[RMDB]
RNA sequence: GGGAACGACUCGAGUAGAGUCGAAAACGCUGGGUUCGUAACAUCUAGUCCUGCGAUGAGUAACUGAAGCGCGCACGGUUACGAGCAGGCUAGUGGAACCUGUGCUGAAGCGCGCACGGCAACCGAAAGGUGCGAAAGUCAUGUCUUCGGACAUGACCCACAUAUGUCGAUUCGUCGACAUAUGUGGAAAAGAAACAACAACAACAAC
Reactivity to DMS in 0.01 (KOAc 150mM, MgCl2 10mM, bicine 150mM(pH8.5), 24C), signal-to-noise 2, nucleotides 027 to 156: c040g060c000u000g000g000g030u020u010c010g050u040a050a050c080a060u000c000u000a000g000u000c000c010u010g010c000g010a210u010g010a270g000u000a010a060c040u010g000a020a000g000c000g000c020g000c000a300c040g000g000u000u000a030c000g020a110g060c030a030g030g000c000u000a020g020u020g030g010a020a030c010c000u000g020u010g020c010u000g000a070a070g000c040g040c040g020c000a300c000g000g000c020a060a100c020c000g000a070a130a170g010g040u000g000c000g040a100a070a130g000u000c000a000u010g000u000c030u000u010c300g050g020a030c000a000u000g000a000c010
Reactivity to 2A3 in 0.01 (KOAc 150mM, MgCl2 10mM, bicine 150mM(pH8.5), 24C), signal-to-noise 6, nucleotides 027 to 156: c020g010c020u030g000g000g000u000u000c000g020u010a010a020c030a300u070c040u020a030g220u300c020c000u010g010c010g190a300u250g080a050g010u000a000a000c000u020g050a180a050g010c000g000c000g000c000a010c010g010g000u000u000a010c010g020a040g000c010a000g000g000c000u000a000g000u010g010g000a000a000c000c000u000g000u000g000c010u030g020a170a050g000c000g000c000g000c000a010c000g010g000c010a020a000c010c000g050a120a040a030g000g000u010g010c020g070a120a020a010g000u010c000a000u000g000u000c000u040u100c300g070g010a000c000a000u010g000a000c000